[RMDB]
RNA sequence: GGGAACGACUCGAGUAGAGUCGAAAAUAUCAAGUCUUUUCAUCUUAUGAUGAUUUGCCUCUUACAAACCAUCAUAUACCUAAACAUCUCUCACUCUAUGUCCAGGCUAUGGAGUCUGACGAUGGUGAUGAAAACAUCAAUUCGUUGAUGUUUUCAUAAAAGAAACAACAACAACAAC
Reactivity to DMS in 0.01 (KOAc 150mM, MgCl2 10mM, bicine 150mM(pH8.5), 24C), signal-to-noise 9, nucleotides 027 to 126: u010a100u000c110a090a120g010u000c030u000u000u000u000c070a050u010c070u000u010a030u010g010a010u000g000a030u000u000u000g010c080c150u010c190u000u010a160c040a010a030a020c010c010a020u000c010a010u000a040u010a080c080c050u010a060a080a100c030a020u000c010u000c010u000c070a030c010u000c020u000a040u010g000u010c040c110a080g010g000c060u000a060u000g000g000a030g010u000c050u000g000a050c150g010a010u000g010g010u000g010
Reactivity to 2A3 in 0.01 (KOAc 150mM, MgCl2 10mM, bicine 150mM(pH8.5), 24C), signal-to-noise 8, nucleotides 027 to 126: u160a020u070c060a040a040g110u030c030u070u090u040u080c040a080u010c040u070u140a050u160g000a010u010g020a010u020u000u020g020c020c020u120c050u130u120a040c030a030a040a020c020c010a020u020c020a010u060a010u050a140c020c050u100a140a110a040c030a040u010c020u000c000u010c030a020c000u010c000u020a030u070g030u010c050c040a040g060g030c020u040a050u100g070g010a020g010u010c020u020g010a030c070g020a020u070g020g080u050g030
Source information: This 177-nucleotide RNA was probed chemically with DMS and 2A3. The RNA was probed in 150 mM KOAc, 10 mM MgCl2 and 150 mM bicine (pH 8.5) at 24 C. Source: RMDB library OK2TST, as collected in RNAgym. The 2A3 profile rests on 16,466 reads. DMS adducts were read by reverse transcription with MarathonRT. 2A3 adducts were read by reverse transcription with SuperScript II with manganese.